[RMDB]
RNA sequence: GGGAACGACUCGAGUAGAGUCGAAAAGACAGGUACAGCACAGGCAGCGACAGUGCGAGCUUUCCCCACACCACCCCGUCCAUGUGCCUCAACCCUGACCUGGAGGGACCACCUCUAGAGGUGAGAGUAUUUACCAGACUUUCGAGUCUGGUAAAUAAAAAGAAACAACAACAACAAC
Reactivity to 2A3 in 0.01 (KOAc 150mM, MgCl2 10mM, bicine 150mM(pH8.5), 24C), signal-to-noise 6, nucleotides 027 to 126: g050a020c050a030g030g000u100a040c010a020g000c040a020c020a030g040g040c020a020g040c030g050a040c040a040g060u030g050c020g020a000g020c000u030u030u030c010c000c000c000a020c000a000c010c010a030c010c010c010c010g020u010c030c010a050u080g040u080g040c010c000u050c030a050a050c000c000c000u030g040a060c000c010u020g020g030a020g020g010g020a040c020c040a070c020c010u010c020u040a060g010a030g100g020u050g010a060g000a010g020
Reactivity to DMS in 0.01 (KOAc 150mM, MgCl2 10mM, bicine 150mM(pH8.5), 24C), signal-to-noise 9, nucleotides 027 to 126: g010a110c110a040g000g010u000a040c120a080g010c060a050c070a070g000g000c050a060g020c040g000a090c080a060g030u020g000c030g000a080g010c050u000u000u000c020c000c000c070a110c120a080c070c050a080c030c010c020c030g010u000c020c030a070u010g010u010g000c030c010u010c070a060a120c090c010c010u000g010a110c060c010u010g000g010a060g000g000g000a180c130c110a090c010c000u000c020u020a070g000a050g010g010u010g000a150g000a100g020
The record gives the reactivity of an RNA of 177 nucleotides to 2A3 and DMS. DMS (dimethyl sulfate) methylates the pairing face of unpaired adenines and cytosines. The reactions ran in a buffer of 150 mM KOAc, 10 mM MgCl2 and 150 mM bicine (pH 8.5), at 24 C. Values cover nucleotides 27 to 126. Source: RMDB libraries RFM100 and RFMREP, as collected in RNAgym.